RNA sequence: GGGAACGACUCGAGUAGAGUCGAAAAUUAAAUAAUCGGGCGCCCGCUGGCUUUGAGAGGCCGUGCCUUUGGGAUAUGGUGAGCCCGUUUCCUUCACGUUAUCCCGACCGGAACCAUAGGCGAAAAAACGAAAUAUCUGAUUCGUCAGAUAUUUCGUAAAAGAAACAACAACAACAAC
Reactivity to 2A3 in 0.01 (KOAc 150mM, MgCl2 10mM, bicine 150mM(pH8.5), 24C), signal-to-noise 2, nucleotides 027 to 126: u020u000a010a030a130u110a090a060u060c020g010g010g010c020g040c010c150c000g000c170u120g020g020c020u130u160u200g140a300g040a060g140g010c020c030g020u040g020c020c000u050u010u050g050g000g010a050u050a060u240g110g000u030g040a020g020c010c010c010g000u000u040u030c000c000u020u080c070a050c010g020u050u010a030u080c020c020c000g020a060c050c030g010g040a050a050c000c000a070u060a070g010g020c040g000a140a020a040a040a000
Reactivity to DMS in 0.01 (KOAc 150mM, MgCl2 10mM, bicine 150mM(pH8.5), 24C), signal-to-noise 2, nucleotides 027 to 126: u000u020a060a120a060u010a140a150u000c010g000g000g000c050g020c070c070c110g030c160u000g000g000c010u010u020u030g000a140g020a110g010g000c010c070g000u010g000c030c030u000u000u010g020g010g000a080u000a040u010g000g050u010g010a070g000c030c020c030g020u000u000u000c020c020u010u000c060a070c030g000u000u010a060u000c010c010c010g010a120c130c090g000g000a040a110c020c020a040u000a040g020g010c020g010a010a040a040a040a060

Annotation:
An RNA of 177 nucleotides, treated with 2A3 and DMS and read out base by base. For DMS the reverse transcriptase was MarathonRT. 2A3 adducts were read by reverse transcription with SuperScript II with manganese. The 2A3 profile rests on 1,191 reads. The DMS profile rests on 1,557 reads.